[RMDB]
RNA sequence: GGGAACGACUCGAGUAGAGUCGAAAAGCUAGACUAUCUACAUUUAUCGCAUAUCCGUUUUGCUUGAGGGGGCAACGAUGGUACGCGCCGAUCGUGAUCGCUGGGAUCUCGCGACGAGUGUCGGGGCAAUGUCAUCUCGUUUCGACGAGAUGACAUUAAAAGAAACAACAACAACAAC
Reactivity to DMS in 0.01 (KOAc 150mM, MgCl2 10mM, bicine 150mM(pH8.5), 24C), signal-to-noise 3, nucleotides 027 to 126: g000c050u000a070g010a100c090u000a060u000c050u000a060c080a060u000u000u010a110u010c030g020c040a060u010a110u010c050c040g030u000u000u000u000g020c050u000u000g000a060g000g020g020g010g000c050a040a030c080g020a060u010g000g030u000a100c130g010c070g000c040c030g000a040u000c050g000u000g000a060u000c090g000c040u000g010g030g000a060u000c060u010c090g010c020g010a040c050g000a120g010u000g010u000c030g010g000g000g000c170
Reactivity to 2A3 in 0.01 (KOAc 150mM, MgCl2 10mM, bicine 150mM(pH8.5), 24C), signal-to-noise 3, nucleotides 027 to 126: g050c050u060a030g030a120c020u050a090u110c030u060a100c050a100u090u170u120a120u110c050g000c080a030u020a050u150c030c030g030u020u030u100u140g030c020u090u100g050a120g030g030g020g010g000c010a010a030c030g020a030u060g020g030u050a040c030g000c000g000c010c040g080a070u040c010g030u020g050a090u030c040g000c060u060g000g020g090a080u020c020u030c060g020c030g020a050c020g010a040g040u100g020u010c020g030g010g010g000c030
Notes:
Chemical mapping of a 177-nucleotide RNA with DMS and 2A3. The 2A3 profile rests on 3,116 reads. The DMS profile rests on 2,908 reads. The data come from the RNA Mapping Database (RMDB), library OK2TRN.